Chemical mapping of a 177-nucleotide RNA with 2A3 and DMS. The 2A3 profile rests on 1,807 reads. 2A3 adducts were read by reverse transcription with SuperScript II with manganese. DMS adducts were read by reverse transcription with MarathonRT. Conditions: 150 mM KOAc, 10 mM MgCl2 and 150 mM bicine (pH 8.5), 24 C.
RNA sequence: GGGAACGACUCGAGUAGAGUCGAAAAGAGACUGCUGGACUCGCCGCCCGAGCCCGAGCAUGGGCCCCAGUUCCGAACGAAGAGACCGCCGGGGAAGGGGGGCGAACCGACGGGAGUUCAAUGGUAAGAAUUAGUUAUACUUCGGUAUAACUAAUUCAAAAGAAACAACAACAACAAC
Reactivity to 2A3 in 0.01 (KOAc 150mM, MgCl2 10mM, bicine 150mM(pH8.5), 24C), signal-to-noise 2, nucleotides 027 to 126: g040a000g020a020c020u030g010c000u020g070g020a080c010u000c020g000c010c010g210c010c000c000g060a080g100c010c000c010g070a060g030c050a120u250g000g020g040c000c000c030c000a020g000u050u060c110c080g070a050a050c010g020a040a060g080a020g050a050c000c000g020c010c000g000g020g010g000a000a010g030g000g000g010g000g030c020g000a010a010c000c000g030a020c020g000g020g040a010g000u030u100c050a060a030u120g070g060u140a120a050
Reactivity to DMS in 0.01 (KOAc 150mM, MgCl2 10mM, bicine 150mM(pH8.5), 24C), signal-to-noise 3, nucleotides 027 to 126: g000a180g010a070c030u000g000c030u000g010g010a120c070u000c000g000c020c010g010c020c010c020g000a300g000c000c000c000g000a120g010c060a130u020g020g000g010c000c000c020c030a160g010u010u000c130c140g010a090a080c060g020a130a070g010a130g000a200c000c020g010c050c000g000g010g000g010a050a300g000g020g000g010g000g000c020g020a010a050c030c080g010a090c060g000g000g000a080g020u000u010c030a040a070u000g010g010u000a070a160